Source: RMDB library VIROID, as collected in RNAgym. This 207-nucleotide RNA was probed chemically with 2A3. 2A3 adducts were read by reverse transcription with SuperScript II with manganese. For 2A3, 1,183 sequencing reads were counted.
RNA sequence: GGGAACGACUCGAGUAGAGUCGAAAAUCUUCCUGGCCUUCCGGAGAUCUCUCUCGAGCUCCUCCGCCUUUCUUCUUGUUGAGAUCCAUUUCUCGAGGAUCUCCUCCCUUGUUCCCCUUCGACUCCUCUUCGUCUCGGUUUGGCUCAUCCUCGGGACCGAAGUUUCUAAGUUCGCUUAGAAACUUCGAAAAGAAACAACAACAACAAC
Reactivity to 2A3 in 0.01 (KOAc 150mM, MgCl2 10mM, bicine 150mM(pH8.5), 24C), signal-to-noise 2, nucleotides 027 to 156: u020c020u160u100c020c050u040g060g000c030c070u250u150c080c050g040g000a030g010a050u050c000u010c000u000c000u020c080g020a030g020c100u050c020c020u010c010c010g100c010c010u050u210u130c020u060u050c020u000u150g000u130u160g050a010g000a000u000c020c010a090u010u210u060c150u130c140g100a080g030g020a000u010c010u000c010c000u030c010c000c000u050u060g010u040u040c000c000c000c070u020u050c000g050a040c010u020c000c020u070c000u110u080c040g060u020c010u010c040g020g020u030u090u020g060g010c040u040c090a030u050c040c010u020c020g000g010g010a000c020
The RNA was probed in 150 mM KOAc, 10 mM MgCl2 and 150 mM bicine (pH 8.5) at 24 C.